Chemical mapping of a 207-nucleotide RNA with DMS and 2A3. The RNA was probed in 150 mM KOAc, 10 mM MgCl2 and 150 mM bicine (pH 8.5) at 24 C.
RNA sequence: GGGAACGACUCGAGUAGAGUCGAAAAGUUCAUCCCCUGAUCAAGGAUGCCCGAAACGGUGAGGCGGAAAGCAAAUUAAAUAACGUCAACCCAUCGGGACGGUUGGCCAGCUAAGAAGUGAGGAUUCAAAAGAUCGAACCGUUCGCGGUUCGAUCAACUAAGUUGUCUAGUUCGCUAGACAACUUAGAAAAGAAACAACAACAACAAC
Reactivity to DMS in 0.01 (KOAc 150mM, MgCl2 10mM, bicine 150mM(pH8.5), 24C), signal-to-noise 2, nucleotides 027 to 156: g040u000u000c030a130u000c020c000c000c000u020g010a100u000c090a160a170g030g030a160u000g030c020c020c020g020a070a110a100c150g010g020u010g000a160g010g000c040g000g020a130a090a130g010c050a120a110a180u000u000a000a100a150u010a050a150c070g020u000c030a040a030c020c000c030a280u000c030g020g000g010a140c140g000g010u000u000g000g000c040c040a110g060c100u030a100a090g010a120a180g010u000g040a150g030g020a190u000u010c020a030a070a120a180g010a000u010c000g000a020a010c000c000g050u000u000c270g040c000g060g030u010u000c000g020a000u000c000a010a080
Reactivity to 2A3 in 0.01 (KOAc 150mM, MgCl2 10mM, bicine 150mM(pH8.5), 24C), signal-to-noise 7, nucleotides 027 to 156: g050u070u060c020a050u060c030c000c010c020u060g020a100u050c000a030a030g050g020a050u090g020c000c000c010g060a080a080a030c110g010g020u070g040a140g040g000c030g010g040a130a030a020g110c120a080a050a120u200u200a070a090a080u200a080a010c010g000u000c010a010a020c000c000c010a030u040c010g010g010g010a010c010g020g010u020u010g020g010c010c030a020g040c060u090a120a040g050a120a040g110u050g070a090g050g050a050u080u050c050a050a050a030a060g010a000u010c000g000a000a000c010c000g010u050u060c200g000c020g070g000u010u000c000g000a000u000c000a000a000